[RMDB]
RNA sequence: GGGAACGACUCGAGUAGAGUCGAAAAAAGCUUUGCAGGAAGGAUGUGGCUGAUGAGACCAUCAACCUCAGUCCUGCCAAGGGUGAGGCGGCCCAGAGAGGUUUUUCCACUGGGUAUUCCUGGUACGGGAUAACCAUGUGUUCGCACAUGGUUAUCCAAAAGAAACAACAACAACAAC
Reactivity to 2A3 in 0.01 (KOAc 150mM, MgCl2 10mM, bicine 150mM(pH8.5), 24C), signal-to-noise 1, nucleotides 027 to 126: a010a030g050c010u040u000u030g050c010a020g050g000a040a000g030g040a070u030g020u060g050g010c000u020g000a010u040g020a060g210a100c210c080a000u010c010a000a050c010c010u020c050a050g200u000c020c010u000g000c020c000a090a070g180g070g030u030g020a020g060g000c000g050g000c030c040c000a000g030a020g010a020g020g010u230u240u100u210u100c000c020a110c010u000g030g000g010u040a100u000u010c030c020u090g040g000u070a070c090g030
Reactivity to DMS in 0.01 (KOAc 150mM, MgCl2 10mM, bicine 150mM(pH8.5), 24C), signal-to-noise 2, nucleotides 027 to 126: a080a150g000c020u000u010u000g030c000a140g020g010a060a010g020g010a090u000g010u000g000g040c030u000g020a010u010g010a260g020a190c290c030a030u000c010a010a000c010c000u010c010a040g020u000c000c010u010g010c020c070a110a090g040g010g020u010g000a020g010g030c030g000g000c020c020c010a010g020a120g010a100g000g000u000u000u000u010u020c040c010a140c040u000g000g010g010u000a130u000u000c010c000u000g000g010u020a080c300g000